[RMDB]
Annotation
Structure probing data (2A3 and DMS) for a 177-nucleotide construct. Conditions: 150 mM KOAc, 10 mM MgCl2 and 150 mM bicine (pH 8.5), 24 C.
RNA sequence: GGGAACGACUCGAGUAGAGUCGAAAAAAUGUUCUCCGGUUUGACCGUAACCUGAGGUCAGAUAUCUGAGCCCACAGCACGGCGGCCCAUUAAGCUUAUCGUCUGCUCCUGUGUAGGCAGGCCGAUAGAAUUUAUAUAGCUUCGGCUAUAUAAAUUCAAAAGAAACAACAACAACAAC
Reactivity to 2A3 in 0.01 (KOAc 150mM, MgCl2 10mM, bicine 150mM(pH8.5), 24C), signal-to-noise 2, nucleotides 027 to 126: a020a010u140g000u040u000c020u000c010c020g040g010u010u020u140g070a080c020c000g020u050a060a050c000c020u050g030a010g020g020u030c010a000g020a040u250a080u110c040u060g020a040g090c000c000c010a050c010a010g000c030a010c000g030g040c000g000g000c040c000c000a140u150u150a100a020g030c030u060u040a010u060c000g010u000c010u000g020c020u080c010c030u250g050u060g040u150a030g010g040c000a000g010g020c030c030g010a010u010a080
Reactivity to DMS in 0.01 (KOAc 150mM, MgCl2 10mM, bicine 150mM(pH8.5), 24C), signal-to-noise 4, nucleotides 027 to 126: a100a070u000g000u000u000c010u000c020c080g020g010u000u000u000g010a050c030c020g020u010a110a080c120c070u000g000a210g000g010u010c000a030g010a200u010a050u010c040u010g010a120g010c010c010c020a080c100a070g030c260a050c050g010g020c030g000g000c010c000c070a080u010u010a050a110g010c090u000u010a030u000c020g000u010c000u000g000c020u010c100c060u010g020u000g020u000a230g000g000c020a010g020g000c060c050g010a030u000a030